[RMDB]
RNA sequence: GGGAACGACUCGAGUAGAGUCGAAAAGAUAUGGACACAGGCUAGCUCUGUAUCGGAAACGAUACUGAGCUUGGACCCUGGUCCUAAGUCAAAGGAGAAUUAAUUAGUUCGCUAAUUAAUUCUCCAACACAUAUGGGCUGUUCGCAGCCCAUAUGUGAAAAGAAACAACAACAACAAC
Reactivity to 2A3 in 0.01 (KOAc 150mM, MgCl2 10mM, bicine 150mM(pH8.5), 24C), signal-to-noise 1, nucleotides 027 to 126: g040a050u080a080u100g050g000a090c080a010c010a300g030g000c000u020a000g000c000u010c030u040g030u000a000u000c000g050g030a070a040a010c000g000a000u000a000c000u010g010a010g000c010u020u020g020g030a020c040c030c000u010g020g010u000c020c000u000a140a050g030u040c090a170a030a080g000g000a010g030a010a010u020u020a000a000u000u000a020g050u060u110c290g070c210u000a020a020u000u010a000a010u000u000c000u060c000c000a010a000
Reactivity to DMS in 0.01 (KOAc 150mM, MgCl2 10mM, bicine 150mM(pH8.5), 24C), signal-to-noise 2, nucleotides 027 to 126: g000a060u000a300u010g010g000a010c020a080c020a010g000g000c000u000a030g020c000u000c000u000g010u000a030u000c010g010g000a100a060a120c000g030a010u000a000c000u000g010a020g010c020u010u020g030g010a070c280c010c010u000g000g010u000c010c000u000a000a040g000u000c050a090a110a140g020g000a030g000a030a000u000u000a010a000u000u000a010g000u000u000c250g020c000u000a000a000u000u000a000a010u000u000c000u010c000c000a000a070